[RMDB]
RNA sequence: GGGAACGACUCGAGUAGAGUCGAAAAGAAGAGAGUAGAAGAUGGCCGUCAUGGUCCAAGCCCCUCGCUGGCGCCGGCUGGGCAACACCAUUGCACUCCGGUGGCGUAUGGUGCAAGAGAGAAAGAACCUAUAGCGCCCAUUCGUGGGCGCUAUAGGAAAAGAAACAACAACAACAAC
Reactivity to 2A3 in 0.01 (KOAc 150mM, MgCl2 10mM, bicine 150mM(pH8.5), 24C), signal-to-noise 1, nucleotides 027 to 126: g070a020a010g000a000g000a000g050u260a000g020a080a000g000a170u040g020g020c020c000g020u150c100a120u210g000g000u030c000c000a060a000g000c000c000c000c000u010c050g120c040u000g100g180c000g000c020c020g050g020c160u000g000g000g020c000a000a000c020a030c080c000a130u000u010g000c000a000c000u000c010c030g000g030u010g010g030c000g000u140a000u090g140g010u020g040c000a030a020g000a010g000a010g030a100a000a090g010a050a040
Reactivity to DMS in 0.01 (KOAc 150mM, MgCl2 10mM, bicine 150mM(pH8.5), 24C), signal-to-noise 2, nucleotides 027 to 126: g000a210a070g000a020g000a110g020u000a020g000a110a080g020a210u020g010g000c010c020g010u000c170a070u020g060g010u050c070c000a000a110g010c020c000c000c020u000c030g000c030u000g030g030c060g000c000c060g020g000c150u000g000g000g010c040a060a130c100a150c300c110a070u000u000g010c030a000c000u030c050c030g000g030u010g000g000c020g000u010a060u000g000g030u040g030c120a050a070g010a140g000a070g000a110a020a060g000a140a120
Conditions: 150 mM KOAc, 10 mM MgCl2 and 150 mM bicine (pH 8.5), 24 C. Structure probing data (2A3 and DMS) for a 177-nucleotide construct. The DMS profile rests on 1,532 reads. The data come from the RNA Mapping Database (RMDB), library OK1LIB. For 2A3, 566 sequencing reads were counted.